An RNA of 177 nucleotides, treated with DMS and 2A3 and read out base by base. For DMS the reverse transcriptase was MarathonRT. For DMS, 8,225 sequencing reads were counted. It was measured as part of the RMDB library M2PK90. For 2A3 the reverse transcriptase was SuperScript II with manganese. Conditions: 150 mM KOAc, 10 mM MgCl2 and 150 mM bicine (pH 8.5), 24 C.
[RMDB]
RNA sequence: GGGAACGACUCGAGUAGAGUCGAAAAUUAAAGAUCUAUGAUCUGCACUGAACAAGUCACGGUGGUCGGAAACGACGCCGAAAGGCCAGGUCAUAGUUCCGACCUGAAGACUUGACGGGUCAAAAAACUAAUAGGUAACGUUCGCGUUACCUAUUAGAAAAGAAACAACAACAACAAC
Reactivity to DMS in 0.01 (KOAc 150mM, MgCl2 10mM, bicine 150mM(pH8.5), 24C), signal-to-noise 6, nucleotides 027 to 126: u010u010a090a060a030g010a010u000c010u000a040u000g000a010u000c000u000g000c040a020c010u000g020a060a130c000a010a010g010u010c000a300c020g000g010u000g010g020u000c000g010g000a090a130a170c020g010a020c010g020c000c000g010a040a040a080g000g020c010c120a000g000g000u010c000a020u000a020g010u000u000c010c050g000a010c000c000u000g000a070a090g010a010c000u000u000g000a300c020g000g000g010u020c020a000a050a060a080a070a140
Reactivity to 2A3 in 0.01 (KOAc 150mM, MgCl2 10mM, bicine 150mM(pH8.5), 24C), signal-to-noise 1, nucleotides 027 to 126: u150u100a120a020a010g010a000u000c010u020a010u050g000a000u000c000u000g020c020a020c010u010g000a100a020c010a020a010g010u010c010a000c070g030g000u010g020g000u000c000g010g000a020a050a020c010g010a000c000g000c000c020g030a050a010a010g000g000c000c000a010g000g020u000c010a000u020a000g000u000u010c010c000g010a000c000c000u010g030a100a030g000a020c010u000u010g030a020c000g000g000g000u010c020a030a030a030a000a050a080